About this RNA:
Conditions: 150 mM KOAc, 10 mM MgCl2 and 150 mM bicine (pH 8.5), 24 C. Structure probing data (DMS and 2A3) for a 177-nucleotide construct. High 2A3 reactivity points to a flexible backbone, as in loops and unpaired stretches.

RNA sequence: GGGAACGACUCGAGUAGAGUCGAAAACUUUGAACGUUCGCGUUCAAAGAAACCUCUAAGCAGAUUGGCGAGGACGACGCUGCGGAGCGGGUUUGCCAAUAAAAAGCGUAGGCUUCGGCCUACGCAACAAGUGGACUGUGUUCGCACAGUCCACUUGAAAAGAAACAACAACAACAAC
Reactivity to DMS in 0.01 (KOAc 150mM, MgCl2 10mM, bicine 150mM(pH8.5), 24C), signal-to-noise 1, nucleotides 027 to 126: c010u000u000u000g030a000a040c000g030u020u020c240g000c020g060u000u000c010a000a010a010g010a080a090a080c030c000u020c110u010a090a140g020c150a040g020a090u000u020g000g000c020g000a130g000g000a120c060g000a070c040g060c030u010g000c200g020g020a070g000c060g000g030g010u000u000u000g010c040c030a060a010u010a020a100a040a170a050g010c000g020u000a000g020g000c000u000u000c210g040g010c010c010u000a000c010g010c000a000a020
Reactivity to 2A3 in 0.01 (KOAc 150mM, MgCl2 10mM, bicine 150mM(pH8.5), 24C), signal-to-noise 1, nucleotides 027 to 126: c000u010u000u010g020a000a000c010g020u040u040c290g050c000g070u020u020c000a010a020a000g000a070a030a000c040c030u020c070u080a120a110g060c020a050g040a300u080u070g020g040c000g070a100g100g070a060c120g030a080c050g040c050u140g000c050g210g090a030g020c020g020g070g000u000u040u140g050c000c020a000a020u050a080a050a030a010a010g000c000g000u010a000g010g010c040u010u030c160g080g000c010c010u000a000c000g030c000a000a000
Values cover nucleotides 27 to 126. For DMS, 1,021 sequencing reads were counted.